This 207-nucleotide RNA was probed chemically with 2A3. 2A3 adducts were read by reverse transcription with SuperScript II with manganese. The RNA was probed in 150 mM KOAc, 10 mM MgCl2 and 150 mM bicine (pH 8.5) at 24 C. For 2A3, 473 sequencing reads were counted. 2A3 is a SHAPE reagent: it acylates the 2'-hydroxyl of flexible nucleotides of all four kinds.
[RMDB]
RNA sequence: GGGAACGACUCGAGUAGAGUCGAAAAUGUCGGUUCGCCGACAAUUAAGCGUACUACGGUGACAUGUUCUCGACCUACCCACCGUAAUCCCAAAUAGGAUUACGAGGGUCACGCGAGAACAACAGCACCGUAUCGCAGAUGCAUGGUUCGCCAUGAAACGGGGAUCCAGUUUCGACUGGAUCCCCGUAAAAGAAACAACAACAACAAC
Reactivity to 2A3 in 0.01 (KOAc 150mM, MgCl2 10mM, bicine 150mM(pH8.5), 24C), signal-to-noise 1, nucleotides 027 to 156: u060g000u000c000g020g030u080u100c300g000c070c000g000a000c000a000a000u120u070a150a030g160c100g080u000a120c010u000a010c030g050g050u050g020a100c000a120u050g000u000u000c000u000c000g300a300c000c080u180a090c030c000c000a220c100c100g000u000a000a000u050c000c060c040a090a300a160u300a130g000g000a000u000u000a000c000g000a000g010g000g000u000c050a040c070g000c000g000a000g000a000a000c000a000a040c080a000g010c000a030c080c000g000u000a030u040c000g000c030a010g100a130u150g130c000a000u000g000g160u170u210c220g090c000c000a000u000g060a100a220